[RMDB]
RNA sequence: GGGAACGACUCGAGUAGAGUCGAAAAGGGGUCACUCGCUAGGAGGUCACGGAGCAUCGAUCUAUACUGAAGCCUCCACGGUAUAGGGAGCUCCGAAGUCCUCCUUGGACCGAGUGACGGAGGCACCCAAAGCAUUCAGUGUUCGCACUGAAUGCAAUCAGAGUGUAUAGUUCGCUAUACACUCUGAAAAAGAAACAACAACAACAAC
Reactivity to 2A3 in 0.01 (KOAc 150mM, MgCl2 10mM, bicine 150mM(pH8.5), 24C), signal-to-noise 3, nucleotides 027 to 156: g060g010g050g010u000c000a000c000u010c000g010c020u020a030g000g000a000g010g010u020c010a010c030g010g000a000g000c000a030u300c030g000a000u000c000u000a000u000a000c010u020g030a100a010g000c000c000u000c000c000a000c000g010g000u010a000u000a010g000g000g000a000g000c000u000c000c000g010a040a010g010u000c000c000u000c010c000u010u180g000g000a000c010c010g000a000g000u000g000a000c010g000g000a000g000g010c000a030c010c010c000a050a070a020g000c000a000u000u000c000a000g000u000g060u110u150c240g060c090a000c000u000g010a010a000u010g000c000a000a030
Reactivity to DMS in 0.01 (KOAc 150mM, MgCl2 10mM, bicine 150mM(pH8.5), 24C), signal-to-noise 2, nucleotides 027 to 156: g010g000g050g020u000c040a000c000u010c030g000c030u000a020g040g000a020g000g000u010c050a300c000g050g010a040g030c020a240u030c150g000a090u010c000u000a020u000a020c010u010g000a040a150g030c020c000u000c000c000a200c020g000g000u000a030u000a030g010g000g000a040g020c020u000c020c000g030a020a020g000u000c000c010u000c000c000u000u000g000g010a040c300c030g000a050g020u030g020a030c000g010g040a040g090g080c020a130c000c000c000a170a160a160g030c010a000u010u000c000a010g030u010g050u010u000c300g000c020a070c000u000g010a060a000u000g010c000a040a050